[RMDB]
RNA sequence: GGGAACGACUCGAGUAGAGUCGAAAAGAAAGAAAGAAAGAAAUCUGACAGAAUGCCGGAUUCGAUCGUUGUGGUCGGCGGGCCACCACGUCAUUCCUUCGCACUGUCUCCGGGCAGACCGCCAUAAAAAAGCGGAUCUACUUCGGUAGAUCCGCAAGCCUAACUCUUAGUUCGCUAAGAGUUAGGCAAAAGAAACAACAACAACAAC
Reactivity to 2A3 in 0.01 (KOAc 150mM, MgCl2 10mM, bicine 150mM(pH8.5), 24C), signal-to-noise 2, nucleotides 027 to 156: g020a000a030a040g050a020a150a010g090a010a110a020g100a060a130a060u070c090u050g010a010c030a020g250a260a140u120g020c070c010g020g010a020u070u080c110g030a070u220c010g020u010u010g000u010g010g020u010c030g000g040c000g000g000g000c010c000a000c010c020a000c000g010u020c020a050u080u020c010c020u130u190c100g020c020a040c050u020g000u010c020u000c060c030g030g020g000c030a000g020a050c000c020g030c020c000a060u220a020a140a000a020a000a020g000c020g000g000a000u010c000u000a010c000u010u000c030g030g000u000a010g000a000u000c000c000g000c000a010a010
This 207-nucleotide RNA was probed chemically with 2A3. For 2A3, 1,089 sequencing reads were counted.